[RMDB]
RNA sequence: GGGAACGACUCGAGUAGAGUCGAAAAUACUAUUCGAUGACAGUAGUCAAUACCUGACUUGGUAUAAAAAUACGCUUAUCGUAGCAUCUGCAAAUGCACUGUUUAGUGUGAUAUUUGUCACGUUAACAUUCGCAAAGUGGUUCGCCACUUUGCGAAUAAAAGAAACAACAACAACAAC
Reactivity to DMS in 0.01 (KOAc 150mM, MgCl2 10mM, bicine 150mM(pH8.5), 24C), signal-to-noise 1, nucleotides 027 to 126: u000a000c160u000a010u020u030c080g000a130u000g000a000c190a000g080u000a100g000u000c120a110a110u000a070c000c000u000g090a130c220u110u120g020g000u000a000u040a040a090a000a050a060u070a060c000g040c130u030u000a040u000c130g030u000a090g020c130a030u000c030u040g000c170a170a180a030u000g000c010a150c100u000g000u030u000u000a000g000u070g010u000g000a040u000a130u050u040u000g000u000c000a000c020g070u000u000a000a090c130
Reactivity to 2A3 in 0.01 (KOAc 150mM, MgCl2 10mM, bicine 150mM(pH8.5), 24C), signal-to-noise 3, nucleotides 027 to 126: u090a030c140u040a070u140u100c040g130a140u050g010a000c020a030g130u120a000g010u000c040a040a000u020a030c000c010u100g140a300c050u260u140g020g020u030a020u080a050a110a020a000a010u220a000c040g030c050u080u020a000u020c010g080u060a080g030c030a000u040c130u200g070c030a000a160a050u050g000c000a020c050u130g020u040u060u050a020g010u010g010u000g010a000u020a150u050u150u120g000u010c010a000c040g010u010u030a070a020c010